This 177-nucleotide RNA was probed chemically with 2A3 and DMS.
2A3 adducts were read by reverse transcription with SuperScript II with manganese.
2A3 is a SHAPE reagent: it acylates the 2'-hydroxyl of flexible nucleotides of all four kinds.
Values cover nucleotides 27 to 126.
The data come from the RNA Mapping Database (RMDB), library M2PK90.
For DMS, 21,201 sequencing reads were counted.

[RMDB]
RNA sequence: GGGAACGACUCGAGUAGAGUCGAAAAACUCUGAGCGUAAUCGCGUCUUGACUAGACUAUAGCUGACGUGAGUAUCUAUCCCAUUGUGCAUAGCGAUGGGAUAAUACGCUGAUCUAUAGUCACGGAAUUCGUCCAUAAUAUUCGUAUUAUGGACGAAAAAAGAAACAACAACAACAAC
Reactivity to 2A3 in 0.01 (KOAc 150mM, MgCl2 10mM, bicine 150mM(pH8.5), 24C), signal-to-noise 9, nucleotides 027 to 126: a010c070u070c070u120g090a030g020c020g040u110a090a080u070c020g010c010g080u030c040u110u140g060a090c050u090a070g000a010c000u000a000u000a020g040c100u020g010a010c000g020u020g040a030g010u010a010u010c090u010a000u010c010c000c010a000u000u020g020u040g040c120a140u280a240g010c000g010a000u000g000g000g000a000u000a000a000u000a000c000g000c010u010g010a020u020c010u010a000u000a000g010u000c020a010c090g090g070a090a170
Reactivity to DMS in 0.01 (KOAc 150mM, MgCl2 10mM, bicine 150mM(pH8.5), 24C), signal-to-noise 9, nucleotides 027 to 126: a060c040u000c040u010g010a060g020c020g010u010a090a110u000c020g010c030g000u000c010u010u000g010a140c160u010a120g010a020c010u000a010u000a010g000c110u000g000a160c130g010u000g010a050g010u000a010u000c220u000a010u000c000c000c000a020u000u000g010u000g010c300a090u010a100g000c000g000a000u000g010g000g000a000u000a000a010u000a010c000g000c000u000g000a120u000c020u000a010u000a010g010u000c000a160c260g000g000a110a170